[RMDB]
RNA sequence: GGGAACGACUCGAGUAGAGUCGAAAACGGAUUAGGCGUGGAGGCGAAAGUCACCCUCCUCGCAUCGCAAGUUCGUGCUUGCGACUUACACGUAGGGGGAGGGGUGGGCGAAAGUUGCCAUGAGACCAAAAUAUGUAGUUCUUCGGAACUACAUAAAGAUAAUAUCGGAUUUCGAUCCGAUAUUAUCAAAAGAAACAACAACAACAAC
Reactivity to 2A3 in 0.01 (KOAc 150mM, MgCl2 10mM, bicine 150mM(pH8.5), 24C), signal-to-noise 4, nucleotides 027 to 156: c060g040g030a130u140u180a090g060g050c010g000u030g020g000a030g000g000c050g040a110a060a040g070u060c040a030c000c000c000u010c000c000u000c010g040c000a010u000c000g000c000a000a020g010u250u300c230g130u300g040c000u000u000g000c010g000a000c000u080u120a010c160a000c040g140u190a150g000g020g000g010g140a040g010g080g050g090u080g020g000g000c010g030a100a000a000g030u040u040g040c020c020a010u020g070a020g040a080c040c050a020a080a000a080u060a010u010g010u000a000g000u000u010c000u010u010c200g020g000a000a000c000u000a000c000a000u000a000a000a000
Reactivity to DMS in 0.01 (KOAc 150mM, MgCl2 10mM, bicine 150mM(pH8.5), 24C), signal-to-noise 1, nucleotides 027 to 156: c010g000g000a120u000u000a010g020g000c040g000u000g000g000a070g060g080c040g000a040a130a220g050u010c050a090c060c000c000u000c000c010u010c050g040c160a100u000c000g020c020a010a010g060u000u010c300g010u000g000c030u020u000g000c000g000a010c080u000u000a160c160a190c080g000u000a110g000g000g070g000g000a110g020g010g000g010u010g000g060g010c000g000a050a110a250g000u000u030g010c060c050a030u000g000a070g010a200c040c030a090a130a040a150u000a010u010g030u000a000g010u000u000c020u010u000c300g020g040a010a010c000u010a010c000a010u030a020a020a130